[RMDB]
RNA sequence: GGGAACGACUCGAGUAGAGUCGAAAAAAGUCCGACCGGGGCUAAGAGACUCAAGCCCUGUAGCUUGGGAGGCGCCGUGGCGCGAGAGCAAGGCGGUGGAGCCCUCCGACAACAUUCUCAGAAAGGAAAUAAUGCUUUCUUUCGAGAAAGCAUUAUUAAAAGAAACAACAACAACAAC
Reactivity to DMS in 0.01 (KOAc 150mM, MgCl2 10mM, bicine 150mM(pH8.5), 24C), signal-to-noise 9, nucleotides 027 to 126: a090a050g020u030c020c040g020a090c200c120g010g000g000g020c010u000a090a070g010a190g000a140c090u010c070a110a070g010c010c010c040u010g010u030a080g000c070u010u020g020g000g010a030g000g000c020g000c020c000g040u010g000g020c300g010c010g020a160g010a170g010c030a060a300g000g000c000g000g010u000g010g000a130g010c040c000c000u010c040c030g000a100c050a060a100c090a110u010u000c010u010c000a110g010a100a110a080g010g010a090
Reactivity to 2A3 in 0.01 (KOAc 150mM, MgCl2 10mM, bicine 150mM(pH8.5), 24C), signal-to-noise 5, nucleotides 027 to 126: a010a010g060u080c060c000g010a090c080c020g020g000g010g000c000u070a140a030g150a010g060a110c030u060c210a050a010g020c020c000c000u020g060u080a020g020c040u040u090g030g000g000a010g010g040c020g010c000c000g020u030g020g020c040g000c010g020a070g010a010g030c010a010a000g090g000c000g000g020u050g040g020a050g010c020c000c000u020c000c010g030a010c000a060a000c000a070u100u030c020u000c040a030g200a130a130a020g110g040a050
Chemical mapping of a 177-nucleotide RNA with DMS and 2A3. For 2A3 the reverse transcriptase was SuperScript II with manganese. It was measured as part of the RMDB libraries RFM100 and RFMREP. The RNA was probed in 150 mM KOAc, 10 mM MgCl2 and 150 mM bicine (pH 8.5) at 24 C.